RNA sequence: GGGAACGACUCGAGUAGAGUCGAAAAGAUAUGGAGCAUAUAAGUCGUAGUGAUUUAAGGGAGCGAAAUUCUCGGAAACGAGAAGUUCGCGAAGAACUUAAAUCACUAUAAAUCUUGCUCCUAAGUCCAAUUACUGGCUGUUCGCAGCCAGUAAUUGAAAAGAAACAACAACAACAAC
Reactivity to DMS in 0.01 (KOAc 150mM, MgCl2 10mM, bicine 150mM(pH8.5), 24C), signal-to-noise 1, nucleotides 027 to 126: g010a060u010a300u000g020g010a000g000c020a030u030a190u020a100a140g030u000c300g040u000a020g020u000g010a040u000u000u000a000a010g010g030g020a070g030c010g010a000a050a010u000u000c000u000c000g030g000a120a110a160c010g020a010g000a030a000g020u000u000c000g000c010g010a060a150g000a090a210c000u010u000a010a050a010u000c000a020c000u010a000u000a090a140a100u020c170u000u000g010c000u000c000c000u010a030a060g000u000c010
Annotation: Conditions: 150 mM KOAc, 10 mM MgCl2 and 150 mM bicine (pH 8.5), 24 C. An RNA of 177 nucleotides, treated with DMS and read out base by base. For DMS, 998 sequencing reads were counted. High DMS reactivity at an A or C suggests that its Watson-Crick edge is free. DMS adducts were read by reverse transcription with MarathonRT.